RNA sequence: GGGAACGACUCGAGUAGAGUCGAAAAAGCGCUAACAAGGCGUACAAAUGCCGGGCCCAGCAGCUUUUUUGCAAUGGUGGGGCCUUAGCAGGGCGCCAGGCUAAUGAGGGUCACUCAAAGGGGCUGAAUGCUAAGAUCGGUUCGCCGAUCUUAGCAUAAAAGAAACAACAACAACAAC
Reactivity to DMS in 0.01 (KOAc 150mM, MgCl2 10mM, bicine 150mM(pH8.5), 24C), signal-to-noise 1, nucleotides 027 to 126: a110g000c020g030c030u030a070a080c250a270a070g000g000c010g000u050a040c130a050a080a010u050g000c000c230g000g000g000c000c000c000a140g000c010a130g000c020u000u000u020u000u030u000g000c040a100a050u010g020g000u010g030g000g000g000c000c020u080u000a080g030c060a060g000g000g010c000g000c000c010a020g010g010c070u000a060a060u020g010a100g000g020g020u030c070a120c020u020c030a080a170a100g070g000g000g000c010u000g040a040
Reactivity to 2A3 in 0.01 (KOAc 150mM, MgCl2 10mM, bicine 150mM(pH8.5), 24C), signal-to-noise 1, nucleotides 027 to 126: a000g040c000g000c040u110a050a070c020a250a000g020g000c000g020u030a100c100a050a240a000u100g010c000c000g000g050g000c000c000c000a090g070c000a000g000c000u180u020u160u090u290u020g030c010a050a160u120g090g000u000g030g000g080g020c000c000u020u030a040g000c000a020g070g000g010c000g000c000c020a020g000g000c000u070a140a000u060g000a020g030g110g040u050c010a050c020u070c000a010a140a080g000g000g000g000c000u000g020a070